[RMDB]
RNA sequence: GGGAACGACUCGAGUAGAGUCGAAAAUAUUAUAACUGCAAAAAAUAAUAACAAUUCUUACGCUUUAGCUGCCUAAUAGUAGCUUGACGUAGAUCCGCCUAGUCUCGUCCAUGGGCUAGAUACGGGUCCUAAAUGAAGUGGACUUGCGCUUAAGUACCGUAAUAACUUCGUUCGCGAAGUUAUUACGAAAAGAAACAACAACAACAAC
Reactivity to 2A3 in 0.01 (KOAc 150mM, MgCl2 10mM, bicine 150mM(pH8.5), 24C), signal-to-noise 2, nucleotides 027 to 156: u120a010u070u140a040u080a160a050c070u170g010c030a070a120a020a070a040a050u120a180a080u130a120a090c040a020a110u180u010c020u080u110a040c030g070c050u060u070u060a000g000c000u030g000c010c030u190a230a230u180a170g010u000a010g010c000u000u000g010a000c010g010u000a040g000a020u000c000c000g000c010c020u010a000g000u020c010u010c070g000u000c000c000a070u040g000g000g010c000u000a000g000a020u110a050c040g000g020g010u030c000c000u090a170a140a120u200g080a080a030g000u010g030g000a020c000u010u040g000c040g030c030u060u080a110a030g020u020a180c010
The record gives the reactivity of an RNA of 207 nucleotides to 2A3. 2A3 adducts were read by reverse transcription with SuperScript II with manganese. The reactions ran in a buffer of 150 mM KOAc, 10 mM MgCl2 and 150 mM bicine (pH 8.5), at 24 C. For 2A3, 1,089 sequencing reads were counted.